Overview: The record gives the reactivity of an RNA of 207 nucleotides to 2A3 and DMS. It was measured as part of the RMDB library RFM130. DMS adducts were read by reverse transcription with MarathonRT. 2A3 adducts were read by reverse transcription with SuperScript II with manganese. The DMS profile rests on 4,837 reads.

RNA sequence: GGGAACGACUCGAGUAGAGUCGAAAAAGUUUUGCGCUCAGUGGACAUGAUGCUCCGCCGCCCAUAUAUCCCGCUAUGUAUAUCCUGUGUGCGCUCUAGUUCCGUUGGGACCCUGAAGAGUAAGCACACUAAACCAUGCAUUAUACAUGACCGCCCACAAUAAUGGUCUGUUCGCAGACCAUUAUUGAAAAGAAACAACAACAACAAC
Reactivity to 2A3 in 0.01 (KOAc 150mM, MgCl2 10mM, bicine 150mM(pH8.5), 24C), signal-to-noise 6, nucleotides 027 to 156: a000g040u050u060u090u090g040c060g000c010u020c060a020g030u030g020g010a030c050a100u200g040a090u120g130c060u010c010c010g030c010c030g000c010c030c010a030u070a010u020a050u090c010c010c020g000c040u060a050u040g040u030a050u020a050u150c030c100u080g000u000g010u000g000c020g000c020u000c000u000a030g010u030u000c030c050g140u240u220g040g000g010a020c040c050c070u090g150a120a040g000a020g030u030a110a040g000c010a000c000a000c000u010a020a010a020c040c030a030u090g040c010a020u090u040a040u080a040c030a030u080g070a030c090c010g050c080c030c080a060
Reactivity to DMS in 0.01 (KOAc 150mM, MgCl2 10mM, bicine 150mM(pH8.5), 24C), signal-to-noise 2, nucleotides 027 to 156: a120g020u000u000u000u020g010c070g030c010u000c120a070g060u000g000g000a110c060a150u000g010a150u000g020c090u000c030c030g030c060c070g020c040c030c030a070u000a110u000a160u010c020c020c010g040c070u000a050u010g020u010a040u000a060u010c070c090u020g010u000g030u000g010c020g000c010u000c010u000a070g000u000u000c010c010g050u000u020g040g020g000a040c000c110c110u010g040a140a090g010a050g020u010a020a140g080c020a020c030a020c020u010a060a070a160c120c100a110u000g000c060a120u000u000a080u000a040c010a040u000g010a110c040c050g020c010c010c020a250